[RMDB]
RNA sequence: GGGAACGACUCGAGUAGAGUCGAAAAAAAAGAUAUGGAGCUUCUAUUGGGACGAUAAGAUAUGUGUAGGAUAGUGUCGGAAACGACACCUUAUCUUUUGACGUCCAGGGAAGCUCCUAAGUCAAAACAAGGGAGUUAGGUUCGCCUAACUCCCUUGAAAAGAAACAACAACAACAAC
Reactivity to DMS in 0.01 (KOAc 150mM, MgCl2 10mM, bicine 150mM(pH8.5), 24C), signal-to-noise 1, nucleotides 027 to 126: a070a020a130a170g040a040u030a300u000g000g010a020g000c010u000u000c010u010a180u020u010g030g000g030a050c000g000a100u000a020a010g000a010u020a000u000g020u010g010u000a130g030g000a070u010a110g020u000g020u000c000g000g000a070a090a200c000g040a000c000a000c000c030u000u000a000u000c000u010u000u010u000g000a100c080g000u010c000c000a070g000g060g020a040a000g020c000u000c000c010u000a000a040g000u010c010a150a100a190a150
Chemical mapping of a 177-nucleotide RNA with DMS. The RNA was probed in 150 mM KOAc, 10 mM MgCl2 and 150 mM bicine (pH 8.5) at 24 C. It was measured as part of the RMDB library TTRDES. For DMS the reverse transcriptase was MarathonRT.